Chemical mapping of a 207-nucleotide RNA with 2A3. Values are in units of 0.01, from 0 to 300, in steps of 10. It was measured as part of the RMDB library M2RFPK.
RNA sequence: GGGAACGACUCGAGUAGAGUCGAAAAGGAGGACGAAGCAUAUUUCUGUUUCUGGAGGAUUAUUUAUAAUCUGCCGGAAAGUCUUGCAGGUGACUGGGAUAUGUUCAGUCUGGUAGAAUUAAGCACGAAAACGUGUCCUUGUUCGCAAGGACACGAAGACUGUGCAACUGUUCGCAGUUGCACAGUCAAAAGAAACAACAACAACAAC
Reactivity to 2A3 in 0.01 (KOAc 150mM, MgCl2 10mM, bicine 150mM(pH8.5), 24C), signal-to-noise 1, nucleotides 027 to 156: g150g020a080g000g020a020c020g010a040a000g000c020a000u020a010u000u030u070c080u060g060u040u040u010c020u000g020g030a030g000g000a000u000u000a030u050u300u010a060u020a070a000u000c010u010g100c030c030g000g020a000a040a000g030u010c040u080u100g080c010a050g160g140u100g110a010c020u010g000g000g000a010u020a010u120g140u210u050c100a000g000u000c010u000g020g000u040a030g050a180a110u100u090a080a030g030c020a000c180g070a080a120a010a030c000g000u010g010u000c000c000u000u050g000u050u020c050g000c050a000a000g010g000a060c000a000c000g000a000a000